[RMDB]
RNA sequence: GGGAACGACUCGAGUAGAGUCGAAAAACAUGCUGGCCAACCCAACCCCACGAUCCUCCAUGGGCAUGAUCAUGAUGUGUUCUCAAAUAUCAGGCCAGUAAAUCACCAUGCUCGUGCUGGUAAAGGCAACUUAUGCCCAAGUUCGCUUGGGCAUAAACUUUCUAAGCCGUUUCGACGGCUUAGAAAGAAAAGAAACAACAACAACAAC
Reactivity to DMS in 0.01 (KOAc 150mM, MgCl2 10mM, bicine 150mM(pH8.5), 24C), signal-to-noise 1, nucleotides 027 to 156: a080c030a030u000g030c010u000g020g000c020c030a140a180c150c010c000a100a160c090c000c000c030a110c030g070a160u010c000c000u000c030c020a130u010g030g010g030c040a050u000g020a070u000c050a100u000g010a080u010g020u000g020u000u000c070u000c070a120a040a190u010a150u040c050a090g000g010c000c000a050g060u010a000a060a150u010c030a030c010c000a010u010g000c020u000c040g000u000g070c000u000g000g000u010a070a250a040g000g040c000a100a110c050u000u000a030u000g000c010c000c010a040a050g010u000u010c300g070c010u020u000g010g000g040c000a010u000a010a010a140
Reactivity to 2A3 in 0.01 (KOAc 150mM, MgCl2 10mM, bicine 150mM(pH8.5), 24C), signal-to-noise 2, nucleotides 027 to 156: a000c030a000u080g030c000u000g000g020c010c010a020a010c130c010c010a030a040c050c040c020c010a140c080g050a120u020c000c000u030c080c010a070u070g010g020g000c020a000u010g050a020u070c030a030u070g060a020u140g080u010g050u050u000c050u000c050a080a060a000u270a100u210c080a090g030g020c000c000a010g010u020a000a120a040u080c030a010c040c000a000u020g020c000u000c000g020u010g000c000u000g000g030u080a070a070a060g070g010c040a110a040c030u000u000a000u010g000c000c000c000a020a020g020u060u030c070g020c140u000u000g000g010g000c000a000u010a000a000a000
Structure probing data (DMS and 2A3) for a 207-nucleotide construct. For 2A3, 845 sequencing reads were counted. DMS adducts were read by reverse transcription with MarathonRT.